[RMDB]
The data come from the RNA Mapping Database (RMDB), library ARCHII. The record gives the reactivity of an RNA of 207 nucleotides to 2A3. The RNA was probed in 150 mM KOAc, 10 mM MgCl2 and 150 mM bicine (pH 8.5) at 24 C. 2A3 adducts were read by reverse transcription with SuperScript II with manganese.
RNA sequence: GGGAACGACUCGAGUAGAGUCGAAAAGACAACUAUGCGGAAGCUCGUCUCGCUGCUUAAUUGCGGUGUGACACUUCACAUUAAGCCCUAGAGGGUCGCACUUCUAGGCGGGGUUCGGAGGUACCUGGCAACAGAAACCUCCACUUGCUGCGCAAGCGAUCCAGGUAUACUUCGGUAUACCUGGAUCAAAAGAAACAACAACAACAAC
Reactivity to 2A3 in 0.01 (KOAc 150mM, MgCl2 10mM, bicine 150mM(pH8.5), 24C), signal-to-noise 3, nucleotides 027 to 156: g060a000c030a110a070c100u190a090u160g110c090g050g010a010a010g000c130u180c280g030u000c030u010c030g000c000u010g000c020u070u110a100a090u300u120g010c030g000g000u030g000u020g010a000c020a010c020u010u020c000a000c010a000u050u130a070a170g300c000c000c010u000a000g000a000g000g030g010u130c060g020c040a080c010u000u020c000u000a010g000g010c000g000g000g000g000u030u100c080g000g000a000g000g020u000a010c000c000u000g240g000c000a010a020c000a000g010a000a000a000c000c000u000c000c000a000c000u000u020g010c020u090g030c100g010c030a010a020g020c020